An RNA of 207 nucleotides, treated with 2A3 and DMS and read out base by base. Values cover nucleotides 27 to 156. The data come from the RNA Mapping Database (RMDB), library M2RFPK. For DMS, 1,711 sequencing reads were counted.
[RMDB]
RNA sequence: GGGAACGACUCGAGUAGAGUCGAAAAGAAAGAAAGUACUGAAAGUAUUGUGGGAAAUUAUGUGUAAAUCAUUGACCGUUCCUGCGCUGGUAAGAAUAAAAUUUUAGUCCAGACACCACCAGUAUAACCAAUCUAGUGACCUUCGGGUCACUAGAAACACAUAGGUGAGGUUCGCCUCACCUAUGUGAAAAGAAACAACAACAACAAC
Reactivity to 2A3 in 0.01 (KOAc 150mM, MgCl2 10mM, bicine 150mM(pH8.5), 24C), signal-to-noise 2, nucleotides 027 to 156: g010a000a090a020g070a060a120a000g010u040a010c040u020g010a100a080a030g040u060a140u200u140g010u030g020g030g030a010a070a030u120u070a050u100g010u000g020u030a010a020a080u090c030a010u020u130g050a040c010c000g060u060u070c060c020u010g010c010g020c010u040g010g000u040a050a000g040a120a090u130a120a110a080a060u080u120u030u060a020g000u000c020c000a000g000a010c010a010c030c000a000c000c000a010g030u010a050u030a130a040c050c030a020a030u000c000u000a000g000u000g000a000c000c000u010u040c200g080g000g000u010c000a000c010u010a000g000a010a000a000
Reactivity to DMS in 0.01 (KOAc 150mM, MgCl2 10mM, bicine 150mM(pH8.5), 24C), signal-to-noise 1, nucleotides 027 to 156: g000a120a130a150g040a110a080a120g060u020a090c050u000g030a110a050a110g000u000a040u000u010g020u000g000g000g000a040a090a070u000u000a040u000g050u010g020u000a050a100a130u030c060a080u010u000g020a110c080c070g000u000u000c020c010u000g020c090g070c060u010g040g040u020a070a110g000a130a110u020a030a140a030a300u000u000u000u000a130g020u000c030c010a070g020a100c050a040c020c020a040c070c020a050g020u010a040u020a090a080c050c020a010a180u010c000u000a000g020u000g020a000c000c000u000u050c260g030g060g020u000c000a010c000u000a000g010a000a070a140